[RMDB]
RNA sequence: GGGAACGACUCGAGUAGAGUCGAAAAGUUGGGGACGAUCACGUAGUGGCUGACGUGCCGGAAGUUGAAGACGGUGUGGGCACCGUCGUCACCGAGCACGUACAGAGCGCCCUCGUCGGGCUGGAAGAAGAUCUUUGGCAUUCGUGCCAAAGAUCUUAAAAGAAACAACAACAACAAC
Reactivity to DMS in 0.01 (KOAc 150mM, MgCl2 10mM, bicine 150mM(pH8.5), 24C), signal-to-noise 1, nucleotides 027 to 126: g010u000u020g010g020g000g000a070c050g010a030u000c020a090c040g000u000a070g010u020g010g020c020u000g030a050c000g000u000g020c000c010g000g000a290a080g010u020u050g010a020a020g000a010c000g000g020u000g030u010g020g060g020c020a040c000c000g020u010c000g000u000c000a020c000c010g000a130g030c000a040c000g020u000a010c120a050g020a150g020c060g000c010c020c020u000c140g010u000c150g020g020g010c070u000g000g000a130a070g010

Overview:
Structure probing data (DMS) for a 177-nucleotide construct. Conditions: 150 mM KOAc, 10 mM MgCl2 and 150 mM bicine (pH 8.5), 24 C. It was measured as part of the RMDB library OK2TST.